[RMDB]
RNA sequence: GGGAACGACUCGAGUAGAGUCGAAAAACUGACGGUACGCCGUCAGAACGGUAGAAAAGAUGGUUUGAAAACCACGCCUUCUACCAACAUAGUAAAUAAAUAGGCGGAGCGGUCAUACGUGACCGCAAAAACAUCCUUGGCUUCGGCCAAGGAUGAACUAAAUCUUUCCCUUCGGGGAAAGAUUUAGAAAAGAAACAACAACAACAAC
Reactivity to 2A3 in 0.01 (KOAc 150mM, MgCl2 10mM, bicine 150mM(pH8.5), 24C), signal-to-noise 2, nucleotides 027 to 156: a000c010u030g000a000c000g000g000u070a050c210g040c030c000g020u000c000a000g000a040a010c000g000g000u000a000g000a020a030a010a030g050a200u010g020g070u020u090u200g070a130a120a000a000c000c000a000c000g000c000c000u000u040c000u000a000c010c010a010a010c030a030u250a010g090u110a010a060a090u030a060a060a090u110a020g000g010c000g010g020a010g000c000g000g000u030c010a020u030a130c170g060u010g000a000c000c000g000c000a000a000a000a000a040c000a000u010c000c000u000u000g000g020c020u050u020c180g080g000c000c000a000a000g000g000a000u000g000a000a000
Structure probing data (2A3) for a 207-nucleotide construct. Reactivities are given for positions 27 through 156. For 2A3 the reverse transcriptase was SuperScript II with manganese. The RNA was probed in 150 mM KOAc, 10 mM MgCl2 and 150 mM bicine (pH 8.5) at 24 C.